Record summary
The data come from the RNA Mapping Database (RMDB), library OK3TST. An RNA of 207 nucleotides, treated with 2A3 and DMS and read out base by base. For DMS, 2,973 sequencing reads were counted. Reactivities are rounded to 0.1 and cut off at 0 and 3. The RNA was probed in 150 mM KOAc, 10 mM MgCl2 and 150 mM bicine (pH 8.5) at 24 C. As a SHAPE reagent, 2A3 marks flexible, mostly unpaired nucleotides at the ribose 2'-OH.
[RMDB]
RNA sequence: GGGAACGACUCGAGUAGAGUCGAAAAAGAGAACAUGCUCACCGGGAGAUCCCACCUGUCCAAUGUGUCGAACCCCUUUUGAUCUCCCUACGUACAGAUGUAGGUUAACAAUCGAACGUGUCUCUGAUUCGAAUGUUUCGACACACAACUUUGAAACAAAUUUCCAAGAUUUCGAUCUUGGAAAUUUAAAAGAAACAACAACAACAAC
Reactivity to 2A3 in 0.01 (KOAc 150mM, MgCl2 10mM, bicine 150mM(pH8.5), 24C), signal-to-noise 2, nucleotides 027 to 156: a000g050a000g000a050a000c020a060u060g010c010u020c010a050c020c010g000g000g000a010g010a010u040c010c030c020a050c010c020u050g080u050c040c030a070a070u100g000u000g000u010c000g000a020a010c000c000c040c010u040u000u050u140g020a030u010c010u000c000c000c000u010a010c020g010u060a050c030a090g090a040u090g070u090a060g070g020u060u040a110a030c040a090a060u060c020g000a020a000c010g030u030g060u040c010u000c010u090g110a210u040u060c020g020a060a020u080g040u010u020u000c010g020a000c000a000c000a000c000a060a050c050u210u170u210g160a120a040a020c120
Reactivity to DMS in 0.01 (KOAc 150mM, MgCl2 10mM, bicine 150mM(pH8.5), 24C), signal-to-noise 1, nucleotides 027 to 156: a070g000a100g010a060a110c020a040u000g010c010u000c000a120c090c080g000g000g050a080g000a130u000c010c100c010a100c050c050u010g030u000c060c040a120a110u000g030u010g000u010c010g000a040a060c020c020c000c080u010u000u000u000g000a040u000c000u010c060c010c000u010a020c040g030u000a160c100a110g010a090u010g000u000a100g000g000u000u010a030a010c040a030a060u000c020g020a070a030c020g030u000g000u010c020u000c020u000g000a300u000u000c050g030a070a120u000g010u010u010u000c000g000a060c010a050c020a050c050a050a130c040u000u000u000g000a120a080a110c100